This 177-nucleotide RNA was probed chemically with DMS and 2A3. DMS adducts were read by reverse transcription with MarathonRT. The 2A3 profile rests on 9,276 reads. Conditions: 150 mM KOAc, 10 mM MgCl2 and 150 mM bicine (pH 8.5), 24 C. The DMS profile rests on 7,533 reads. For 2A3 the reverse transcriptase was SuperScript II with manganese.
RNA sequence: GGGAACGACUCGAGUAGAGUCGAAAAUCGGUGCCGAACUUGGCGAUGAUGGUUCCGUUGAUGGCCGGUGACACCACCAUCAGCAGCAGCGCCGAGCCGGCGGCGGCCAUCUCCUCCAUCACCAGCGGUUGAAGCGUAUAUUCGUAUACGCUUCAACAAAAGAAACAACAACAACAAC
Reactivity to DMS in 0.01 (KOAc 150mM, MgCl2 10mM, bicine 150mM(pH8.5), 24C), signal-to-noise 6, nucleotides 027 to 126: u010c030g030g000u000g020c030c020g000a090a140c090u010u000g010g020c070g020a070u000g010a080u010g010g010u000u010c060c070g020u000u010g020a040u000g000g010c110c070g000g010u000g020a180c100a300c040c020a100c030c000a020u000c020a030g020c040a090g020c070a070g000c030g010c020c010g000a060g020c100c040g010g000c030g010g010c020g000g000c020c040a050u000c030u000c020c020u000c030c030a050u010c050a060c050c060a080g000c160g010
Reactivity to 2A3 in 0.01 (KOAc 150mM, MgCl2 10mM, bicine 150mM(pH8.5), 24C), signal-to-noise 4, nucleotides 027 to 126: u060c020g140g080u070g010c000c020g030a090a070c070u040u070g030g010c040g050a060u080g020a010u050g060g080u180u050c080c030g010u020u030g020a020u020g020g100c180c200g070g040u070g060a050c050a050c190c000a000c000c010a010u020c010a020g010c010a000g000c020a010g050c010g000c000c000g000a020g030c010c000g010g010c000g000g020c000g010g020c020c000a040u020c020u010c000c000u010c010c010a080u070c010a020c060c020a030g050c030g110